[RMDB]
RNA sequence: GGGAACGACUCGAGUAGAGUCGAAAAGCUGGGAACCUGGUGUCCAGACCGUCGCGGUGAAAUGCGACCUGUGUGAUUUCUUGCCAGAAGGUCCGGCCUGCGUUCGCGCUUGCCCGAAUCAGGCGUAUGAUCAUACGCCCUUCGGGGCGUAUGAUCAAAAAGAAACAACAACAACAAC
Reactivity to DMS in 0.01 (KOAc 150mM, MgCl2 10mM, bicine 150mM(pH8.5), 24C), signal-to-noise 1, nucleotides 027 to 126: g000c040u020g020g000g020a040a030c030c020u000g000g040u000g000u000c040c040a030g020a110c060c110g010u000c030g010c010g000g000u020g010a070a170a110u000g020c050g010a040c090c090u010g020u040g060u010g010a060u000u010u000c130u010u020g030c020c020a060g010a190a130g000g020u000c000c080g010g020c040c020u010g020c300g000u010u000c050g020c020g000c030u000u000g000c050c020c020g000a050a050u020c240a030g000g000c120g000u010a070